[RMDB]
RNA sequence: GGGAACGACUCGAGUAGAGUCGAAAAUUGAGAGACAUAAAAUUAAAGGAAGAAGCUCUUGGCGCAACUGUUCAAUAAUCACCAGAACCCAGGUACCAAGUGAGCCUGGCUAUCGAUGGAGUAUGCAUAUGGCAAGGGCCCAUAACUUGGAAACCACCUGCUCCUUUAAUUUCGAUUAAAGGAGCAGAAAAGAAACAACAACAACAAC
Reactivity to 2A3 in 0.01 (KOAc 150mM, MgCl2 10mM, bicine 150mM(pH8.5), 24C), signal-to-noise 1, nucleotides 027 to 156: u090u100g020a070g000a020g000a060c020a050u130a170a090a140a050u230u190a190a080a130g040g000a160a160g030a020a020g000c000u020c000u050u010g110g000c100g020c030a060a130c010u070g050u110u020c050a000a080u200a200a020u090c000a020c060c000a040g000a070a000c000c000c000a000g000g020u070a040c070c050a200a030g040u010g160a050g030c000c000u000g060g020c040u010a040u120c060g020a020u080g080g000a020g010u050a050u060g030c000a010u030a030u210g040g020c010a040a040g070g000g000c000c000c000a030u020a110a000c070u010u080g050g000a130a000a040c010c110a020c050